[RMDB]
RNA sequence: GGGAACGACUCGAGUAGAGUCGAAAACGAGGAGGUGGAGAUGCCAUGCCGACCCGAAGAGGAAAGAAGAACGCGAGACGCGAACCUGUGAGUGGAAACCCGCUUUAUUCACUGGGGUCGACAGCUCGACACUAUAUUACUUCGGUAAUAUAGUGUCAAAAGAAACAACAACAACAAC
Reactivity to DMS in 0.01 (KOAc 150mM, MgCl2 10mM, bicine 150mM(pH8.5), 24C), signal-to-noise 7, nucleotides 027 to 126: c080g020a090g010g010a070g010g030u000g010g010a100g010a080u000g010c070c070a080u010g020c030c040g010a070c050c020c010g010a080a080g010a110g010g010a040a070a100g010a080a070g000a050a060c120g020c060g000a070g010a090c080g010c040g010a050a090c030c040u000g000u000g000a040g030u000g000g000a050a070a130c040c020c030g010c110u000u000u000a050u010u010c040a040c040u010g010g000g000g010u000c010g010a050c080a070g010c100u000c090
Reactivity to 2A3 in 0.01 (KOAc 150mM, MgCl2 10mM, bicine 150mM(pH8.5), 24C), signal-to-noise 6, nucleotides 027 to 126: c040g010a050g020g010a020g010g010u060g020g030a070g010a050u100g030c030c010a050u060g000c010c000g030a040c000c010c020g020a050a030g050a040g040g040a060a040a040g050a040a010g020a060a010c030g020c020g050a060g030a060c050g010c010g040a040a050c000c010u040g020u040g060a030g010u030g000g020a060a060a060c010c020c010g030c030u090u090u070a110u050u050c020a010c060u050g020g000g020g000u010c010g020a020c010a020g030c030u050c060
Record summary: Chemical mapping of a 177-nucleotide RNA with DMS and 2A3. Source: RMDB library 15KREP, as collected in RNAgym. For 2A3, 14,929 sequencing reads were counted. DMS adducts were read by reverse transcription with MarathonRT. 2A3 adducts were read by reverse transcription with SuperScript II with manganese. DMS (dimethyl sulfate) methylates the pairing face of unpaired adenines and cytosines.